This 207-nucleotide RNA was probed chemically with 2A3 and DMS.
The RNA was probed in 150 mM KOAc, 10 mM MgCl2 and 150 mM bicine (pH 8.5) at 24 C.
For DMS, 8,724 sequencing reads were counted.
RNA sequence: GGGAACGACUCGAGUAGAGUCGAAAAACACCUGUUUCGACAGGUGUAAAAACCGUAGGCCUACCCCAGGAGGGAUGGACUAUUUCGAAAGAGACGAAUCCAUCCUACCCACCCUGAACUAGGCCUAAACGGAAAAACUUGUGAUUCGUCACAAGAACAAUAUGUUCUUAUUCGUAAGAACAUAUUGAAAAGAAACAACAACAACAAC
Reactivity to 2A3 in 0.01 (KOAc 150mM, MgCl2 10mM, bicine 150mM(pH8.5), 24C), signal-to-noise 6, nucleotides 027 to 156: a000c000a010c000c000u010g010u020u100u060c080g040a020c020a010g000g000u000g000u020a030a010a010a030a010c010c000g000u010a010g000g010c000c000u020a040c060c040c000c010a000g000g020a020g000g010g000a000u010g000g000a030c090u120a240u080u100u040c040g100a160a130a090g160a060g030a040c040g040a050a040u000c000c000a000u000c000c000u030a050c030c060c020a060c010c010c000u010g020a090a060c070u020a030g010g010c000c000u000a020a020a000c000g010g030a060a040a030a030a050c010u010u010g000u000g010a030u050u100c160g070u030c100a000c000a010a000g020a010a010
Reactivity to DMS in 0.01 (KOAc 150mM, MgCl2 10mM, bicine 150mM(pH8.5), 24C), signal-to-noise 4, nucleotides 027 to 156: a030c000a010c010c000u000g020u010u010u000c210g020a100c000a010g010g010u000g010u000a020a040a070a090a070c020c010g010u020a050g010g000c010c000u000a040c070c100c110c040a110g010g040a300g010g010g000a030u000g010g020a010c030u000a120u000u000u000c020g000a170a100a280g010a060g020a040c010g020a060a040u000c000c010a000u000c020c010u010a100c030c030c030a300c150c010c000u010g000a050a050c060u000a030g020g000c000c000u000a010a040a050c020g010g000a060a060a070a110a090c010u000u010g020u000g000a080u000u010c210g020u000c010a030c010a020a020g000a100a220